[RMDB]
RNA sequence: GGGAACGACUCGAGUAGAGUCGAAAAUGCAUUGCAAGUGAUGACAAAAUCAAGGCUUGUUUCUCGACAUUCGCAGUUGCCGCCUAAGAGCUUUCGCCCUGCCAGGCUUGAGAGGUAGUGCUGCCAAAUCCUUCCUUGGAUGUCUGACGCAAUGCAACAUUUAAGAUUAGUUCGCUAAUCUUAAAUGAAAAGAAACAACAACAACAAC
Reactivity to DMS in 0.01 (KOAc 150mM, MgCl2 10mM, bicine 150mM(pH8.5), 24C), signal-to-noise 8, nucleotides 027 to 156: u000g030c020a050u010u000g020c010a090a170g020u000g010a240u000g020a200c050a070a080a120a300u010c040a050a080g020g010c140u000u000g010u000u000u000c050u010c040g000a070c050a140u000u000c120g010c040a060g020u000u010g090c010c010g020c020c010u010a080a300g000a040g010c030u000u000u010c080g010c020c090c090u000g000c070c060a100g010g000c010u000u000g000a230g010a060g020g010u000a020g030u000g010c030u000g020c020c060a050a060a060u000c030c010u000u000c030c030u000u000g020g010a130u000g000u000c020u000g010a190c120g010c020a030a020u000g010c010a040a210
Reactivity to 2A3 in 0.01 (KOAc 150mM, MgCl2 10mM, bicine 150mM(pH8.5), 24C), signal-to-noise 9, nucleotides 027 to 156: u040g000c000a000u000u000g010c040a100a140g110u100g260a080u060g010a020c020a030a170a050a110u120c010a020a020g020g020c120u070u070g050u100u250u070c180u070c050g050a050c040a140u100u060c040g000c010a010g020u200u240g110c010c010g010c000c000u040a070a020g010a010g010c000u070u140u150c090g030c050c050c040u080g050c050c020a020g010g000c000u020u020g080a200g000a010g040g000u020a020g000u020g010c020u000g000c000c010a030a060a060u050c010c020u050u020c000c000u020u010g030g010a020u030g020u000c010u020g010a010c030g000c000a000a000u000g000c000a000a010
Overview
An RNA of 207 nucleotides, treated with DMS and 2A3 and read out base by base. For 2A3 the reverse transcriptase was SuperScript II with manganese. The DMS profile rests on 33,128 reads.